[RMDB]
RNA sequence: GGGAACGACUCGAGUAGAGUCGAAAAGCGAAUUGAGCGGCAUAACCUGAAUCUGAGGCAGCACCUGGCACGGCUGGGACGGAAGUCGCUGUCGUUCUCAAAAUCGGUGGAGCUGCAUGACAAAGUACGAGCUAUGAGUAUUCGUACUCAUAGCUCGAAAAGAAACAACAACAACAAC
Reactivity to 2A3 in 0.01 (KOAc 150mM, MgCl2 10mM, bicine 150mM(pH8.5), 24C), signal-to-noise 2, nucleotides 027 to 126: g050c000g070a050a080u180u100g050a190g070c020g020g000c020a030u050a160a070c000c030u070g070a080a060u060c030u030g030a020g020g000c020a010g050c010a020c020c020u040g010g000c030a020c100g020g030c000u030g010g020g070a010c010g000g090a060a080g040u020c040g000c200u010g000u000c000g000u090u000c060u000c020a070a110a020a070u120c060g060g000u040g030g050a060g000c000u000g000c040a060u060g040a030c040a030a110a000g050u080a060
Reactivity to DMS in 0.01 (KOAc 150mM, MgCl2 10mM, bicine 150mM(pH8.5), 24C), signal-to-noise 3, nucleotides 027 to 126: g000c050g020a100a110u000u010g030a100g030c020g020g010c040a060u000a050a110c060c000u000g010a090a190u010c060u000g010a080g020g020c020a050g010c060a090c040c050u000g010g020c110a070c040g000g000c010u010g000g000g000a020c080g000g010a130a130g010u000c000g000c040u000g010u000c000g060u000u010c030u000c060a080a060a080a070u010c090g000g000u000g000g010a180g010c020u000g030c060a030u000g010a130c150a060a100a060g040u000a080